[RMDB]
RNA sequence: GGGAACGACUCGAGUAGAGUCGAAAAGGGACGAAUUUCGUUCGUGCGAGCUCUCCACCGUCGAAAGACCGAUACGACUGGCUUCACCAGGCUCGCUGAGUCGGCUUGAAGCGCAACAAAAUUGCAGCCGGGGUUACUCCUUCGGGAGUAACCCCGGAAAAGAAACAACAACAACAAC
Reactivity to 2A3 in 0.01 (KOAc 150mM, MgCl2 10mM, bicine 150mM(pH8.5), 24C), signal-to-noise 1, nucleotides 027 to 126: g000g000g080a070c140g090a280a220u030u300u190c020g140u040u000c000g000u020g030c000g000a000g060c000u000c010u000c030c000a130c040c000g190u090c050g050a080a040a040g070a080c000c060g000a080u080a060c000g060a090c090u110g040g030c000u000u010c000a000c030c020a060g000g000c000u000c000g300c090u090g000a030g020u070c000g040g040c020u000u070g050a000a000g000c040g000c040a000a040c000a020a180a050a010u110u000g050c000a040g090